[RMDB]
RNA sequence: GGGAACGACUCGAGUAGAGUCGAAAAGUAUGCGCGCCGCAUAAUACGCUAUCGCUAUUAUCGCAUAGCGCGCUAUGCGAUAAUAUAUAUAGCGCGCCGCAUAUAUUAUAUAGCGUAUGCGCGCGCGGAGGAACACUUCAUUCGUGAAGUGUUCCUCAAAAGAAACAACAACAACAAC
Reactivity to 2A3 in 0.01 (KOAc 150mM, MgCl2 10mM, bicine 150mM(pH8.5), 24C), signal-to-noise 1, nucleotides 027 to 126: g120u100a130u300g000c000g000c010g020c050c070g000c010a020u100a080a050u170a090c000g000c010u010a000u020c040g010c020u010a010u040u000a000u040c020g010c030a000u030a020g040c130g000c020g050c070u000a010u000g010c000g010a010u000a110a000u020a010u000a000u010a010u010a040g010c000g000c010g020c020c010g020c050a030u050a030u020a040u260u110a110u060a020u050a060g000c020g010u020a000u020g010c020g000c000g020c010g000c000g010
Reactivity to DMS in 0.01 (KOAc 150mM, MgCl2 10mM, bicine 150mM(pH8.5), 24C), signal-to-noise 2, nucleotides 027 to 126: g020u000a050u020g000c000g000c030g020c100c080g040c010a020u000a050a030u010a140c000g000c000u000a010u010c110g020c200u000a030u000u000a020u000c070g010c020a010u000a010g000c010g040c300g010c000u000a000u000g000c050g000a000u000a010a030u000a060u000a070u000a020u000a000g010c000g020c070g020c300c070g020c010a070u000a030u000a080u030u000a090u010a040u000a050g020c000g000u010a010u000g000c000g010c040g020c020g030c000g020